[RMDB]
RNA sequence: GGGAACGACUCGAGUAGAGUCGAAAAGGUAAGCAGAACUGGCGAUGUGGGUUGAACCAAAUAUUGGGAUAAGACGUCUAAUAUUCACUAAUAGAUACCACAAAAGGUGUUAGUUCAUUAAGACAGCGUGUUCACAUAAUUUCGAUUAUGUGAACACAAAAGAAACAACAACAACAAC
Reactivity to DMS in 0.01 (KOAc 150mM, MgCl2 10mM, bicine 150mM(pH8.5), 24C), signal-to-noise 7, nucleotides 027 to 126: g010g010u020a050a080g030c100a060g010a050a070c040u000g000g020c050g000a130u010g030u000g000g000g010u000u010g000a090a150c140c110a040a050a050u000a040u000u000g010g000g000a060u010a060a100g010a120c230g000u000c010u010a030a040u010a030u000u010c130a060c150u000a030a060u010a140g000a100u020a070c010c000a020c060a050a080a100a070g010g010u000g010u000u000a040g010u000u000c050a100u020u030a080a070g000a050c100a100g010c230
Reactivity to 2A3 in 0.01 (KOAc 150mM, MgCl2 10mM, bicine 150mM(pH8.5), 24C), signal-to-noise 7, nucleotides 027 to 126: g080g030u130a050a010g040c050a020g030a040a010c000u020g010g000c020g030a090u080g020u020g020g030g010u030u090g040a020a040c030c010a010a040a000u140a050u050u050g040g020g000a020u060a150a070g130a060c110g020u000c010u010a020a010u030a040u100u070c070a030c090u010a010a040u010a060g100a060u110a160c010c000a030c000a070a120a030a040g100g010u130g000u060u010a020g000u020u010c030a040u120u110a060a030g070a060c030a020g040c040